Structure probing data (DMS and 2A3) for a 207-nucleotide construct. 2A3 is a SHAPE reagent: it acylates the 2'-hydroxyl of flexible nucleotides of all four kinds. Reactivities are rounded to 0.1 and cut off at 0 and 3. For 2A3 the reverse transcriptase was SuperScript II with manganese. The 2A3 profile rests on 1,948 reads.

[RMDB]
RNA sequence: GGGAACGACUCGAGUAGAGUCGAAAAAAUAAUUCGCGAAACUCGUUUCGCGUUGGCUGCCUAAUUCAAGGAAUUAGCGUGCCUUCAUGCUAAGGGUUUGAUAUCUGCUAAAACCCGGUGCAUUCAUAAGACUUUUGCUUGUUCGCAAGCAAAAGAACGAGUAUGCUAACUUCGGUUAGCAUACUCGAAAAGAAACAACAACAACAAC
Reactivity to DMS in 0.01 (KOAc 150mM, MgCl2 10mM, bicine 150mM(pH8.5), 24C), signal-to-noise 1, nucleotides 027 to 156: a080a080u000a050a040u000u010c000g010c010g000a050a070a020c040u020c190g010u000u010u000c030g030c090g030u000u010g030g000c030u000g050c220c010u000a050a020u000u010c000a120a120g060g000a070a050u010u000a050g000c120g010u000g020c020c010u000u010c060a100u000g010c010u000a300a180g000g000g000u000u000u000g000a130u000a120u010c040u010g050c030u000a170a020a070a030c000c000c030g000g010u000g020c020a110u000u010c020a170u010a070a090g000a180c000u000u000u010u000g000c000u000u000g010u010u000c190g000c030a050a010g000c010a000a010a030a010g010a050a140
Reactivity to 2A3 in 0.01 (KOAc 150mM, MgCl2 10mM, bicine 150mM(pH8.5), 24C), signal-to-noise 3, nucleotides 027 to 156: a000a000u270a030a050u150u070c010g000c000g010a000a020a030c120u110c120g070u020u030u000c010g010c000g010u020u040g000g000c020u050g030c050c030u000a010a010u010u010c130a230a160g140g030a030a000u000u010a010g050c070g060u060g000c010c000u020u100c050a010u000g000c000u010a010a050g000g000g030u020u020u010g050a060u060a080u170c140u170g090c030u100a030a030a000a000c000c000c000g010g000u010g000c010a040u010u120c020a040u070a250a140g040a130c000u010u020u000u010g000c000u000u000g020u090u090c210g000c100a000a000g000c000a000a000a000a000g000a010a010